The record gives the reactivity of an RNA of 207 nucleotides to 2A3 and DMS. Values are in units of 0.01, from 0 to 300, in steps of 10. The 2A3 profile rests on 3,009 reads. The RNA was probed in 150 mM KOAc, 10 mM MgCl2 and 150 mM bicine (pH 8.5) at 24 C.
RNA sequence: GGGAACGACUCGAGUAGAGUCGAAAAUGCAUAGCCUUGACUCCGCCGUGGCAACGUAUGAAGGGUUUUCUAUUCGUGUACACAAAUAUGCGGAUGGUGACGCAAACAAGCAGAUGAUGCGUUUUGACCUGUUGCCUGCUUAUGUCUGCUUUAAUCCAUUGGAAAGGUGAUUCGUCACCUUUCCAAUAAAAGAAACAACAACAACAAC
Reactivity to 2A3 in 0.01 (KOAc 150mM, MgCl2 10mM, bicine 150mM(pH8.5), 24C), signal-to-noise 4, nucleotides 027 to 156: u120g020c040a070u070a060g020c000c040u080u090g040a050c020u030c020c020g090c080c100g100u040g020g000c030a040a010c040g090u150a100u280g130a090a110g060g020g030u070u030u070u050c030u030a020u020u020c010g000u020g020u080a020c160a000c020a050a060a080u090a030u070g010c000g000g020a000u010g030g010u040g020a000c020g000c010a000a110a080c040a060a040g060c020a010g020a090u110g030a030u050g050c030g020u010u010u090u150g040a020c000c020u040g020u030u020g040c000c020u000g010c010u070u070a040u150g010u010c010u010g000c000u030u030u030a080a060u070c040c020
Reactivity to DMS in 0.01 (KOAc 150mM, MgCl2 10mM, bicine 150mM(pH8.5), 24C), signal-to-noise 3, nucleotides 027 to 156: u000g040c060a070u000a110g010c030c010u000u010g000a160c040u000c070c020g020c050c080g000u020g000g010c030a050a050c030g000u000a070u000g020a140a190g000g030g030u000u000u000u020c020u000a060u010u010c010g050u000g030u000a030c080a150c220a090a100a220u000a020u000g010c000g020g010a030u000g000g050u010g020a040c040g000c040a040a060a110c040a020a090g020c010a040g000a040u000g010a300u000g000c050g030u000u000u000u010g030a080c050c020u010g020u000u000g000c020c030u000g010c020u000u000a120u020g020u000c030u000g000c030u000u000u010a130a170u000c080c080

DMS (dimethyl sulfate) methylates the pairing face of unpaired adenines and cytosines. The DMS profile rests on 7,605 reads.